[RMDB]
RNA sequence: GGGAACGACUCGAGUAGAGUCGAAAACACUGCCCAAAGAAGUGAGAUUAUGUAGCUGUGGCUGGACGGAACUGAACCUCCCUUUGCAGCAGAGAUGCAAGACUAAUUGUGGGAGGAUACACAUUUCCUAAGGCAAGAAUUUCGAUUCUUGCCUUAGAAAAGAAACAACAACAACAAC
Reactivity to DMS in 0.01 (KOAc 150mM, MgCl2 10mM, bicine 150mM(pH8.5), 24C), signal-to-noise 9, nucleotides 027 to 126: c130a120c140u000g010c010c010c020a080a110a110g010a100a070g020u000g000a090g010a110u000u000a080u000g020u000a070g010c030u010g020u010g010g010c040u000g010g000a060c070g010g000a070a060c100u010g000a110a130c030c010u000c000c010c010u010u000u000g010c050a110g020c060a090g000a130g010a120u000g000c020a060a050g010a140c120u010a080a120u010u000g010u000g010g010g010a020g010g010a050u000a030c140a090c150a090u000u000u000c030
Reactivity to 2A3 in 0.01 (KOAc 150mM, MgCl2 10mM, bicine 150mM(pH8.5), 24C), signal-to-noise 6, nucleotides 027 to 126: c030a010c040u080g020c010c000c010a030a080a000g090a060a000g030u100g040a080g000a130u090u120a060u300g060u070a040g010c040u020g030u030g120g000c010u010g020g010a020c020g000g030a060a030c030u060g040a050a040c010c000u010c010c000c000u050u060u060g020c000a030g000c040a000g040a000g010a170u030g000c010a060a020g030a110c050u160a160a150u190u140g020u100g070g010g000a020g010g000a000u050a000c050a000c010a020u020u040u020c010